[RMDB]
RNA sequence: GGGAACGACUCGAGUAGAGUCGAAAAACUUGUGUGCCAUCCACGCCAAGAGAGUCACCAUUCAGAAGAAGGACAUCCAGUUGGCCAGAAGAUUGAGAGGCGAGAGAUCUUAAGCGAUGCUGGAAUUGCUUAUUUUUUCAUUUCGUAUGGUCUCUGGCGCUAUGAUUAUCUUCGGAUAAUCAUAGCGAAAAGAAACAACAACAACAAC
Reactivity to 2A3 in 0.01 (KOAc 150mM, MgCl2 10mM, bicine 150mM(pH8.5), 24C), signal-to-noise 4, nucleotides 027 to 156: a000c070u100u080g040u020g010u050g100c020c020a040u050c030c010a030c050g030c040c020a060a020g060a000g000a010g090u050c040a020c070c010a070u110u140c080a070g060a170a020g050a030a010g070g030a040c020a060u060c020c000a030g020u090u050g060g000c010c000a040g010a210a000g000a080u080u180g050a070g030a050g130g000c030g010a010g000a000g010a050u000c000u050u090a020a010g000c010g020a010u050g020c080u070g020g100a110a050u040u030g000c010u050u050a090u080u090u020u020u020u030c040a060u020u070u050c020g010u070a040u170g040g000u010c020u010c010u030g030g000
Reactivity to DMS in 0.01 (KOAc 150mM, MgCl2 10mM, bicine 150mM(pH8.5), 24C), signal-to-noise 3, nucleotides 027 to 156: a060c070u010u000g010u000g040u000g030c020c040a130u010c060c070a110c070g000c030c030a090a080g010a120g000a110g040u000c030a140c070c020a140u030u000c060a100g000a080a070g000a070a090g010g010a040c040a100u010c050c100a130g020u000u000g020g000c000c020a120g000a070a090g010a110u000u000g000a130g010a090g030g020c050g010a120g000a100g000a040u000c020u000u000a040a060g010c040g000a060u010g030c050u010g000g000a090a060u000u000g010c050u000u000a030u010u000u000u010u000u000c020a100u000u000u000c050g040u020a090u000g010g010u000c000u010c010u000g000g020